[RMDB]
Notes
This 177-nucleotide RNA was probed chemically with 2A3 and DMS. 2A3 adducts were read by reverse transcription with SuperScript II with manganese. The RNA was probed in 150 mM KOAc, 10 mM MgCl2 and 150 mM bicine (pH 8.5) at 24 C. The 2A3 profile rests on 10,391 reads. For DMS, 5,804 sequencing reads were counted. Source: RMDB library TTRDES, as collected in RNAgym. Values cover nucleotides 27 to 126. For DMS the reverse transcriptase was MarathonRT. In probing experiments dimethyl sulfate is read out at A N1 and C N3, which are open when not base-paired. Values are in units of 0.01, from 0 to 300, in steps of 10.
RNA sequence: GGGAACGACUCGAGUAGAGUCGAAAAGAUAUGGAUCCUUACGGGAGAAGGUAAUCGGAAACGAUUACCCUUCAUCGAUCGUAGGGAUCCUAAGUCAAACGAGCGUUGGGUUCGCCCAACGCUCGAAGUUUAAUAUCAAGUUCGCUUGAUAUUAAACAAAAGAAACAACAACAACAAC
Reactivity to 2A3 in 0.01 (KOAc 150mM, MgCl2 10mM, bicine 150mM(pH8.5), 24C), signal-to-noise 2, nucleotides 027 to 126: g000a000u000a000u040g000g010a000u020c000c000u010u010a010c010g000g020g040a180g000a040a000g010g000u000a000a010u010c000g000g000a010a000a000c000g000a000u010u000a000c030c020c010u010u030c010a070u300c070g040a010u010c000g000u000a010g000g060g000a000u010c000c000u000a000a000g010u000c000a010a060a130c020g010a000g020c000g030u000u030g030g070g050u090u190c300g120c000c000c000a000a010c000g000c010u000c000g010a000a000
Reactivity to DMS in 0.01 (KOAc 150mM, MgCl2 10mM, bicine 150mM(pH8.5), 24C), signal-to-noise 4, nucleotides 027 to 126: g000a010u000a000u010g010g000a000u000c000c000u000u000a010c000g010g000g000a030g010a040a040g000g000u000a000a000u010c010g020g000a000a000a010c000g000a010u000u010a010c300c230c060u000u000c010a300u010c210g000a030u000c010g000u000a010g000g000g010a010u000c000c000u000a000a050g000u000c010a100a120a270c020g000a010g020c020g000u000u000g000g010g020u010u010c300g020c000c000c000a010a010c010g000c000u000c000g010a010a060